An RNA of 207 nucleotides, treated with 2A3 and read out base by base. The RNA was probed in 150 mM KOAc, 10 mM MgCl2 and 150 mM bicine (pH 8.5) at 24 C. For 2A3, 1,226 sequencing reads were counted.
[RMDB]
RNA sequence: GGGAACGACUCGAGUAGAGUCGAAAAACCUUUGUGCUUGCUAGUGCCUGUUGAAAGCUUAUGCUUACCCAUUGGGUAAGCGAUUAAUCAACCUGCACUUGGACCAAGCACUCUGGUAAAAGUACCAUUUUGACAGUUCGCUGUCAAAAUGGUACAACGAGGGGGAACAGUUCGCUGUUCCCCCUCGAAAAGAAACAACAACAACAAC
Reactivity to 2A3 in 0.01 (KOAc 150mM, MgCl2 10mM, bicine 150mM(pH8.5), 24C), signal-to-noise 2, nucleotides 027 to 156: a020c000c000u020u010u000g010u000g000c000u000u000g000c020u020a000g000u000g000c010c030u000g020u030u030g040a140a130a090g010c060u170u110a170u300g010c000u000u000a010c000c000c080a300u170u300g020g020g000u000a000a000g000c010g010a000u050u060a030a040u040c000a000a000c000c020u010g020c030a010c010u010u030g030g060a090c040c060a000a000g020c010a000c000u010c000u000g000g000u050a100a130a030a050g010u020a010c000c000a000u010u010u000u000g010a010c000a000g010u020u040c130g130c210u000g010u010c000a000a010a000a000u000g000g000u000a010c000a000a000